The data come from the RNA Mapping Database (RMDB), library OK1LIB.
This 177-nucleotide RNA was probed chemically with DMS and 2A3.
Values cover nucleotides 27 to 126.
For 2A3, 2,461 sequencing reads were counted.
2A3 adducts were read by reverse transcription with SuperScript II with manganese.
RNA sequence: GGGAACGACUCGAGUAGAGUCGAAAAAGUGCGAAUAUAACCAGGAAAGCACGAAACUGGGAAAGAGUGGAAAAUCCGAACUACGUUGCAUCGAAAAUAGGAGAAAAACACUCGAAGAAGCGUAGAAGGGAAUACUUUAGUUCGCUAAAGUAUUCCCAAAAGAAACAACAACAACAAC
Reactivity to DMS in 0.01 (KOAc 150mM, MgCl2 10mM, bicine 150mM(pH8.5), 24C), signal-to-noise 5, nucleotides 027 to 126: a110g030u000g020c000g020a150a060u020a150u010a080a280c050c030a030g000g000a090a060a150g020c060a040c060g020a090a060a100c020u020g010g000g000a090a050a060g000a020g000u000g010g000a060a050a140a150u010c010c000g000a160a120c110u010a060c020g020u020u040g000c170a060u020c030g000a030a020a070a050u020a160g000g010a070g000a050a070a080a030a110c040a010c070u000c010g020a040a090g000a090a050g010c080g030u010a010g010a120a110
Reactivity to 2A3 in 0.01 (KOAc 150mM, MgCl2 10mM, bicine 150mM(pH8.5), 24C), signal-to-noise 3, nucleotides 027 to 126: a000g160u070g010c050g100a100a000u170a020u000a220a000c000c020a000g010g010a110a010a070g070c050a010c110g050a060a040a030c010u010g000g000g010a050a100a170g050a020g040u080g030g030a060a120a000a030u000c030c010g040a070a030c040u020a040c070g070u070u190g140c050a150u130c120g030a040a030a010a080u170a080g000g030a080g000a000a070a000a010a000c000a000c000u010c010g020a060a030g040a080a000g000c070g000u060a040g050a100a020